Structure probing data (DMS and 2A3) for a 207-nucleotide construct. 2A3 adducts were read by reverse transcription with SuperScript II with manganese. Values cover nucleotides 27 to 156. In probing experiments dimethyl sulfate is read out at A N1 and C N3, which are open when not base-paired.

[RMDB]
RNA sequence: GGGAACGACUCGAGUAGAGUCGAAAACUAGGCCUUCCCAAGGGCAUGGGGGUAGACCCAGCUUCAGUGCUGCACUCAAGCCCAGUCUAAGGCAGCCUCAAAGGCCACGUGACAGAUACUCACACAAGCUGAAGUUGGUGGAGUGUCUGUCCACGGAAAUUUAAUUAGCGUUCGCGCUAAUUAAAUUAAAAGAAACAACAACAACAAC
Reactivity to DMS in 0.01 (KOAc 150mM, MgCl2 10mM, bicine 150mM(pH8.5), 24C), signal-to-noise 2, nucleotides 027 to 156: c040u010a050g040g000c010c030u000u000c000c020c050a130a190g010g000g050c000a070u000g010g000g020g010g010u000a040g010a110c020c010c030a130g010c060u010u000c070a070g010u000g030c030u000g000c030a090c030u000c020a070a160g000c010c020c040a180g010u000c040u000a080a060g000g030c040a140g000c010c000u000c060a060a100a110g020g020c010c000a050c020g010u000g010a180c000a020g020a060u000a020c020u010c020a080c020a070c040a020a080g020c050u010g000a090a300g020u000u000g060g030u000g000g010a100g020u010g000u010c000u010g020u000c010c020a010c010g020g010a100
Reactivity to 2A3 in 0.01 (KOAc 150mM, MgCl2 10mM, bicine 150mM(pH8.5), 24C), signal-to-noise 3, nucleotides 027 to 156: c060u090a080g000g020c000c000u020u030c010c000c010a020a040g040g010g000c020a070u050g020g000g000g010g040u050a060g050a100c000c000c040a020g030c000u110u080c030a070g040u060g190c000u020g020c050a100c110u170c100a130a060g010c000c000c050a060g110u060c060u090a040a010g050g010c010a000g030c000c020u100c060a120a060a010g020g000c000c010a020c010g000u010g000a000c000a000g000a010u010a000c000u000c000a100c010a000c010a270a080g050c140u260g240a240a090g130u170u140g050g020u040g030g010a000g000u000g000u010c010u000g000u000c090c000a000c010g040g050a060